[RMDB]
RNA sequence: GGGAACGACUCGAGUAGAGUCGAAAAGACGAUCACACUAAUAUCAGGAAGGCUUUCUGUUGUGAUUACAGGACAUCCAGGAGGUUUAAGCGGAAAGUACGUAGACGGCCAGACGUACUCAAAGGAACACGACCUGAGUGUUCGCACUCAGGUCGUGAAAAGAAACAACAACAACAAC
Reactivity to DMS in 0.01 (KOAc 150mM, MgCl2 10mM, bicine 150mM(pH8.5), 24C), signal-to-noise 1, nucleotides 027 to 126: g050a000c060g000a040u010c060a070c130a050c210u000a080a010u010a080u000c040a050g010g000a010a150g040g010c090u000u000u000c060u060g000u000u000g020u000g080a000u000u040a100c010a130g040g030a050c080a010u020c000c050a040g000g000a070g000g010u000u000u040a080a050g000c090g000g000a150a100a010g000u000a000c000g060u000a110g000a220c050g010g000c050c060a140g000a000c090g030u000a060c000u020c060a040a150a090g020g010a080a150
Reactivity to 2A3 in 0.01 (KOAc 150mM, MgCl2 10mM, bicine 150mM(pH8.5), 24C), signal-to-noise 1, nucleotides 027 to 126: g010a000c160g060a060u000c030a000c000a000c000u170a060a190u050a020u300c050a010g170g000a130a000g290g000c090u040u190u060c060u000g150u110u080g050u000g030a070u000u110a070c000a000g000g050a000c000a090u020c000c000a000g040g010a000g030g010u000u010u060a030a000g070c050g010g070a020a020a020g000u000a000c060g000u000a000g010a110c070g020g140c000c000a040g000a000c010g000u000a000c060u000c000a000a000a000g170g000a070a000
An RNA of 177 nucleotides, treated with DMS and 2A3 and read out base by base. The data come from the RNA Mapping Database (RMDB), library OK1LIB. 2A3 adducts were read by reverse transcription with SuperScript II with manganese. The DMS profile rests on 1,156 reads.